Chemical mapping of a 177-nucleotide RNA with 2A3 and DMS.
For DMS the reverse transcriptase was MarathonRT.
High DMS reactivity at an A or C suggests that its Watson-Crick edge is free.
Conditions: 150 mM KOAc, 10 mM MgCl2 and 150 mM bicine (pH 8.5), 24 C.
RNA sequence: GGGAACGACUCGAGUAGAGUCGAAAAGCGCGAAGACGUAUAGCGUUGCUUGCUUGGUGAAAUCCUUGCUUGCUUCGCACAGAAAGUAAUCUUCUGUAUGAAGAUAGCUUGUCGAAAGCGCGAAGAAGGGAAUUGUAAACUUCGGUUUACAAUUCCCAAAAGAAACAACAACAACAAC
Reactivity to 2A3 in 0.01 (KOAc 150mM, MgCl2 10mM, bicine 150mM(pH8.5), 24C), signal-to-noise 2, nucleotides 027 to 126: g000c000g010c010g030a060a050g040a000c050g070u130a040u250a200g000c010g000u000u000g000c000u010u010g010c000u000u010g000g030u100g110a120a060a050u220c000c000u000u000g000c000u000u010g000c030u000u000c000g040c000a020c020a040g200a030a080a000g000u040a060a080u000c000u000u040c010u060g200u190a140u300g010a000a000g000a000u010a030g030c010u030u060g000u010c010g050a150a050a040g000c000g000c000g010a020a000g060a070a040
Reactivity to DMS in 0.01 (KOAc 150mM, MgCl2 10mM, bicine 150mM(pH8.5), 24C), signal-to-noise 3, nucleotides 027 to 126: g000c000g020c000g020a140a300g000a050c070g000u020a130u030a170g000c000g000u010u000g010c000u000u000g010c000u020u000g040g020u030g020a110a100a110u010c010c000u000u000g020c000u000u000g000c000u040u010c000g050c030a040c300a090g000a190a030a000g000u000a140a010u000c000u000u000c000u010g040u060a090u080g010a030a020g000a030u000a190g090c020u010u010g000u000c000g000a040a160a300g000c020g000c000g000a070a080g040a190a160